[RMDB]
RNA sequence: GGGAACGACUCGAGUAGAGUCGAAAAUCAAGAAUACGUUGAAUUAGUAGAGUGGUCCGAUAACCUGUGGUCUUCAACAGAUUAUUUGAGAGCUACUCUUGGUGCUCUUACCAUAUACCUAUUGUUACGAUAAUUAAUCCUUCGGGAUUAAUUAUCGAAAAGAAACAACAACAACAAC
Reactivity to 2A3 in 0.01 (KOAc 150mM, MgCl2 10mM, bicine 150mM(pH8.5), 24C), signal-to-noise 3, nucleotides 027 to 126: u060c010a050a030g060a080a060u150a100c060g060u060u120g060a110a060u180u120a130g110u050a020g020a010g010u010g020g010u000c030c020g010a010u000a020a020c000c000u030g000u020g020g130u150c080u200u120c160a040a010c000a010g020a040u010u050a050u040u180u250g140a180g000a010g040c010u020a010c000u040c020u040u050g030g010u020g010c010u000c000u090u020a030c000c000a020u050a010u020a100c000c030u070a070u150u130g060u090u090a050
Reactivity to DMS in 0.01 (KOAc 150mM, MgCl2 10mM, bicine 150mM(pH8.5), 24C), signal-to-noise 5, nucleotides 027 to 126: u000c060a070a080g000a150a060u000a060c120g020u000u000g010a080a100u000u010a100g010u010a030g010a060g030u000g010g010u000c100c040g010a020u000a000a020c010c010u000g020u000g000g010u010c170u010u000c130a090a020c010a020g010a030u000u000a010u010u000u010g020a080g000a080g000c000u000a030c020u000c060u000u010g010g010u000g010c130u010c060u010u000a100c060c030a030u000a100u010a090c040c040u000a080u000u010g010u000u010a200

This 177-nucleotide RNA was probed chemically with 2A3 and DMS. The data come from the RNA Mapping Database (RMDB), library OK2TST. Reactivities are given for positions 27 through 126. The reactions ran in a buffer of 150 mM KOAc, 10 mM MgCl2 and 150 mM bicine (pH 8.5), at 24 C. 2A3 adducts were read by reverse transcription with SuperScript II with manganese. DMS adducts were read by reverse transcription with MarathonRT.